[RMDB]
RNA sequence: GGGAACGACUCGAGUAGAGUCGAAAACUGCGCUGGCUAAGCGUCAGAACCUGAAGGAUAACAUCCAGUUCGACUAAGGAGGGACUAUGUGUUUCAGUCCGAAGAUUAGCACUCCGAAGCCAUCGACCCGUGCCGUUUUAUUCGUAAAACGGCACGGAAAAGAAACAACAACAACAAC
Reactivity to DMS in 0.01 (KOAc 150mM, MgCl2 10mM, bicine 150mM(pH8.5), 24C), signal-to-noise 1, nucleotides 027 to 126: c060u000g030c000g000c060u050g000g080c190u000a060a000g000c060g000u090c100a130g080a120a140c040c060u000g000a200a060g000g040a100u050a030a090c140a300u000c060c000a090g030u000u000c050g000a040c050u060a140a260g000g100a060g050g000g000a000c000u000a000u080g100u000g010u050u040u000c010a000g000u050c040c000g060a000a010g000a070u000u000a000g100c090a080c000u000c000c000g060a060a000g000c090c000a000u000c000g000a110c040
Reactivity to 2A3 in 0.01 (KOAc 150mM, MgCl2 10mM, bicine 150mM(pH8.5), 24C), signal-to-noise 2, nucleotides 027 to 126: c080u120g000c010g000c010u000g070g020c030u070a140a040g010c020g050u060c010a140g020a010a000c050c050u060g070a130a010g040g010a030u050a140a060c050a060u020c030c000a000g010u010u010c010g040a030c000u030a030a180g020g000a000g030g030g030a000c030u030a060u150g130u020g050u080u090u200c020a040g010u010c010c030g010a130a110g060a100u260u140a000g100c010a010c030u000c000c000g060a040a020g020c040c000a000u030c020g110a150c010

The data come from the RNA Mapping Database (RMDB), library OK1LIB. Structure probing data (DMS and 2A3) for a 177-nucleotide construct. As a SHAPE reagent, 2A3 marks flexible, mostly unpaired nucleotides at the ribose 2'-OH.